The record gives the reactivity of an RNA of 207 nucleotides to 2A3 and DMS. For DMS, 5,327 sequencing reads were counted. For 2A3 the reverse transcriptase was SuperScript II with manganese. The data come from the RNA Mapping Database (RMDB), library RNAMAK.
[RMDB]
RNA sequence: GGGAACGACUCGAGUAGAGUCGAAAAGCGUACUACGAGCCGAAGAACGUAUGUAACAAGUGUGGGAGGAGCUUCCCAAAUAGGAAGCUCCGAAGAACACACCGCCCAUACGGGAGGCUCGUAUCGCAAAACAAAGCACUCUUCGGAGUGCUUUGAAUCGUCUAAGAUGAUUCGUCAUCUUAGACGAAAAAGAAACAACAACAACAAC
Reactivity to 2A3 in 0.01 (KOAc 150mM, MgCl2 10mM, bicine 150mM(pH8.5), 24C), signal-to-noise 2, nucleotides 027 to 156: g000c000g020u100a080c050u000a000c010g010a000g010c000c000g120a160a020g020a050a010c010g000u000a000u000g060u150a080a070c080a240a190g010u010g000u000g000g000g010a020g010g000a000g000c000u010u020c000c020c030a180a260a020u120a040g000g000a020a010g000c000u020c010c000g000a020a000g000a010a000c000a000c010a000c010c000g020c000c040c000a000u010a000c000g000g000g000a030g010g050c000u000c000g000u000a000u060c010g020c000a010a060a000a010c000a000a000a000g010c010a000c000u010c010u030u080c240g050g000a000g000u000g000c000u000u000u000g000a000a010
Reactivity to DMS in 0.01 (KOAc 150mM, MgCl2 10mM, bicine 150mM(pH8.5), 24C), signal-to-noise 2, nucleotides 027 to 156: g000c010g000u010a050c100u000a030c000g010a020g000c000c000g010a150a190g000a130a220c020g020u000a020u000g000u000a070a070c080a170a060g000u000g020u000g000g020g030a190g020g030a030g020c010u000u010c000c010c030a000a110a160u010a040g000g010a070a030g030c010u000c000c000g000a030a060g010a130a200c020a010c040a020c000c050g020c210c120c010a040u000a000c040g000g020g000a130g010g030c000u000c010g010u020a000u000c020g000c010a060a070a100a220c020a020a000a020g010c000a010c000u000c000u010u000c300g070g000a040g020u010g010c000u010u000u000g000a050a150